[RMDB]
RNA sequence: GGGAACGACUCGAGUAGAGUCGAAAAGUUACCUAUGAUUAUCAUGGCCUUAAACAAACCUUUAAAGUAGAAUACCCUUUUAACGAUAUUUGCAAUGACAUUAUUUCCUUGGAAACACUUGCAGACUUUACACCAGUUUUUAUUGUUACCAUUGUAACCAUAUCAUAUUAUUCGUAAUAUGAUAUGGAAAAGAAACAACAACAACAAC
Reactivity to 2A3 in 0.01 (KOAc 150mM, MgCl2 10mM, bicine 150mM(pH8.5), 24C), signal-to-noise 6, nucleotides 027 to 156: g020u020u070a100c010c000u050a070u120g070a130u070u170a040u200c050a040u050g030g020c000c010u090u130a060a060a050c070a030a050a090c040c000u120u180u240a110a130a020g030u080a060g090a100a060u100a110c010c000c000u040u050u050u130a080a030c050g020a050u060a130u140u070u100g000c030a050a060u100g020a070c020a020u020u070a060u050u160u040c030c000u040u050g040g030a080a070a010c010a020c060u020u060g000c040a020g020a070c000u080u110u090a030c040a030c030c010a030g020u020u040u040u080u130a100u070u100g030u040u050a030c030c040a060u070u120g050u150a040a010
Reactivity to DMS in 0.01 (KOAc 150mM, MgCl2 10mM, bicine 150mM(pH8.5), 24C), signal-to-noise 2, nucleotides 027 to 156: g010u000u000a140c020c030u010a070u000g020a220u010u010a090u000c040a100u000g030g020c020c040u000u010a080a090a160c070a090a060a070c000c020u000u010u000a050a060a200g000u010a080g010a080a070u000a100c040c030c060u000u000u000u000a070a130c050g010a080u000a030u000u010u010g020c030a040a100u010g010a100c050a080u000u000a050u010u000u000c030c030u010u000g030g000a140a070a080c060a040c080u010u010g000c080a130g000a040c020u000u000u000a050c030a150c060c020a090g000u000u000u000u000u000a050u030u010g000u010u000a090c070c030a170u000u000g000u000a110a210
This 207-nucleotide RNA was probed chemically with 2A3 and DMS. The 2A3 profile rests on 3,241 reads. For DMS, 4,205 sequencing reads were counted. 2A3 adducts were read by reverse transcription with SuperScript II with manganese.